[RMDB]
RNA sequence: GGGAACGACUCGAGUAGAGUCGAAAAGAAAGUAGCGAAACAUACCGCGAAAGUAUGCUUACUAACCGGUAAGGAGGCUAAGAUAGGCCGAACUAUCAAGCUACGACGGGAAAAGAACCGUAGAAAAGGGAAUACAUGUGUUCGCACAUGUAUUCCCAAAAGAAACAACAACAACAAC
Reactivity to DMS in 0.01 (KOAc 150mM, MgCl2 10mM, bicine 150mM(pH8.5), 24C), signal-to-noise 2, nucleotides 027 to 126: g000a200a070a090g060u000a010g070c000g000a090a190a090c040a000u000a000c010c000g000c220g000a180a230a160g000u020a040u000g030c150u050u030a010c210u050a050a170c300c000g020g010u000a020a070g000g000a300g000g010c050u000a110a050g020a290u000a070g000g000c000c010g000a090a150c130u000a040u000c080a010a140g000c030u000a050c000g010a040c000g000g000g020a070a000a100a110g000a150a020c000c000g000u000a060g090a010a070a050a140
Source: RMDB library OK1LIB, as collected in RNAgym. The record gives the reactivity of an RNA of 177 nucleotides to DMS. The RNA was probed in 150 mM KOAc, 10 mM MgCl2 and 150 mM bicine (pH 8.5) at 24 C.